[RMDB]
RNA sequence: GGGAACGACUCGAGUAGAGUCGAAAAUUGUCGGUGGCGCCCGAGCGCCCUUGGGCACGCAAAGCCGAGUUGCUGCUGAUCGCGGCCGUCGGCGCGCUGGCCCUGCUGGGUGCGACCAUCGCGGGCACUGCCGCUGACUCUUCGGAGUCAGCGGCAGAAAAGAAACAACAACAACAAC
Reactivity to 2A3 in 0.01 (KOAc 150mM, MgCl2 10mM, bicine 150mM(pH8.5), 24C), signal-to-noise 1, nucleotides 027 to 126: u020u160g100u110c040g020g030u100g000g060c140g030c000c020c000g010a000g000c000g080c000c040c000u050u070g000g000g000c020a000c040g030c020a220a300a030g000c000c000g010a040g030u110u070g000c050u000g000c030u140g210a220u170c090g000c000g000g000c030c000g200u100c010g000g000c010g020c000g000c000u000g030g040c000c000c000u100g030c090u060g000g000g040u000g040c050g000a000c150c000a070u020c020g030c030g060g000g000c080a000

Record summary: The record gives the reactivity of an RNA of 177 nucleotides to 2A3. The reactions ran in a buffer of 150 mM KOAc, 10 mM MgCl2 and 150 mM bicine (pH 8.5), at 24 C. The data come from the RNA Mapping Database (RMDB), library OK1LIB.